Annotation
Structure probing data (DMS and 2A3) for a 177-nucleotide construct. For DMS the reverse transcriptase was MarathonRT. For 2A3 the reverse transcriptase was SuperScript II with manganese. Reactivities are given for positions 27 through 126. The data come from the RNA Mapping Database (RMDB), libraries RFM100 and RFMREP. The reactions ran in a buffer of 150 mM KOAc, 10 mM MgCl2 and 150 mM bicine (pH 8.5), at 24 C.

RNA sequence: GGGAACGACUCGAGUAGAGUCGAAAAGGAGUGAAAUCCUGUAAUCCUGGACGGACCACCAAUGGGGAAACCACGUUGAGAGACCGGACCCGACAGUGAGGGACGAAAGCCAGGGUCUCGAACCGGAUACCUCAACUGUGUUCGCACAGUUGAGGUAAAAAGAAACAACAACAACAAC
Reactivity to DMS in 0.01 (KOAc 150mM, MgCl2 10mM, bicine 150mM(pH8.5), 24C), signal-to-noise 4, nucleotides 027 to 126: g020g000a030g010u040g030a160a150a110u000c000c000u000g000u040a140a080u000c010c000u010g000g010a110c020g000g000a090c020c040a100c030c020a070a090u030g000g000g000g020a130a100a140c040c000a080c210g020u010u010g010a110g040a130g000a020c030c030g000g000a130c000c010c000g020a130c200a120g020u000g010a120g010g030g010a090c070g000a100a090a160g000c010c040a080g030g000g000u010c010u000c010g000a060a050c050c010g010g010a270
Reactivity to 2A3 in 0.01 (KOAc 150mM, MgCl2 10mM, bicine 150mM(pH8.5), 24C), signal-to-noise 1, nucleotides 027 to 126: g020g000a000g020u160g080a080a070a020u000c000c000u010g030u070a060a060u070c000c010u000g000g000a010c020g070g020a080c000c000a020c030c000a040a050u090g020g040g000g000a040a070a080c010c000a100c040g010u030u060g100a070g000a000g010a040c120c000g000g060a040c000c010c010g050a050c040a050g080u040g110a160g040g010g000a030c020g160a110a000a030g000c030c030a080g010g000g040u000c030u020c000g030a060a040c000c000g000g040a020